Structure probing data (DMS and 2A3) for a 177-nucleotide construct. 2A3 is a SHAPE reagent: it acylates the 2'-hydroxyl of flexible nucleotides of all four kinds. Values cover nucleotides 27 to 126. The 2A3 profile rests on 1,282 reads.

RNA sequence: GGGAACGACUCGAGUAGAGUCGAAAAUGAUGAGGGCCCCUCAUUCAAAUGUUAUGCUUCGUGCUUCCCUCACAUUUUGAGUUGAUUCUUCCCAAUUUCGAGAGUGAGAUUGAUCCGACCAAGUAGUGUACUUGCCCAUAUUCGUAUGGGCAAGUACAAAAGAAACAACAACAACAAC
Reactivity to DMS in 0.01 (KOAc 150mM, MgCl2 10mM, bicine 150mM(pH8.5), 24C), signal-to-noise 1, nucleotides 027 to 126: u000g010a210u000g010a000g000g000g000c150c060c040c180u000c100a090u070u030c200a100a130a020u000g020u050u000a110u010g000c040u000u010c130g000u040g030c040u000u020c040c000c010u020c000a030c000a000u000u000u010u000g000a030g000u020u000g000a160u010u000c030u000u020c000c030c020a110a140u030u020u000c040g000a120g000a040g040u000g000a100g000a050u000u020g010a040u000c020c020g010a130c080c030a070a080g020u010a020g050u000
Reactivity to 2A3 in 0.01 (KOAc 150mM, MgCl2 10mM, bicine 150mM(pH8.5), 24C), signal-to-noise 3, nucleotides 027 to 126: u060g150a070u010g000a000g000g000g010c000c010c010c000u020c040a120u260u120c070a050a170a080u130g080u150u060a120u160g020c020u070u070c110g100u180g070c010u120u090c010c000c000u000c010a000c000a000u020u020u020u000g050a060g040u060u130g170a120u120u020c000u010u000c010c000c000a000a010u010u020u100c070g010a080g010a080g110u010g020a040g040a110u060u200g020a050u050c040c000g050a060c060c020a120a010g010u080a040g060u070